[RMDB]
RNA sequence: GGGAACGACUCGAGUAGAGUCGAAAAGUUAUGCUCUCGCUGCCUAAUGGCGGUGCGGGAAACCCACUCUAAAGUCCUUAGGGUUAGCCCCUUAAGGCGGGGUUCGGAGGCACCUGGCGACAGAAGCUGAAACUGUGCACAUUCGUGUGCACAGUAAGCUACAUGAAAAUUUCGAUUUUCAUGUAGCAAAAGAAACAACAACAACAAC
Reactivity to 2A3 in 0.01 (KOAc 150mM, MgCl2 10mM, bicine 150mM(pH8.5), 24C), signal-to-noise 4, nucleotides 027 to 156: g070u130u080a100u300g060c010u020c020u020c010g010c010u020g010c010c020u300a300a180u230g020g000c030g000g060u020g000c020g010g010g020a040a030a030c020c020c000a040c020u160c060u130a160a140a300g300u040c010c000u000u000a010g020g000g010u020u070a030g020c000c000c040c000u010u040a000a000g010g000c000g020g000g000g000u010u210c140g020g060a020g040g000c010a000c010c000u020g280g000c000g000a020c010a020g020a010a000g000c010u030g020a060a030a010c000u010g000u000g000c000a000c000a010u020u080c170g110u040g000u000g010c000a000c000a000g000u000a000a000
Reactivity to DMS in 0.01 (KOAc 150mM, MgCl2 10mM, bicine 150mM(pH8.5), 24C), signal-to-noise 1, nucleotides 027 to 156: g000u010u020a020u020g040c000u000c020u000c040g070c000u010g000c030c000u000a120a160u000g050g010c060g020g040u000g000c040g000g020g020a060a020a070c010c000c020a080c080u000c060u010a060a080a230g000u000c050c010u000u000a060g000g000g040u000u000a180g010c170c240c010c010u000u000a070a010g050g080c000g000g050g020g020u000u000c020g010g030a300g050g020c040a030c010c000u000g010g010c050g030a130c030a110g020a060a080g020c000u010g010a190a100a050c000u000g000u000g000c070a020c010a170u000u000c260g030u010g040u000g020c000a000c000a000g020u000a030a110
The data come from the RNA Mapping Database (RMDB), library M2RFPK. This 207-nucleotide RNA was probed chemically with 2A3 and DMS. The RNA was probed in 150 mM KOAc, 10 mM MgCl2 and 150 mM bicine (pH 8.5) at 24 C. 2A3 adducts were read by reverse transcription with SuperScript II with manganese.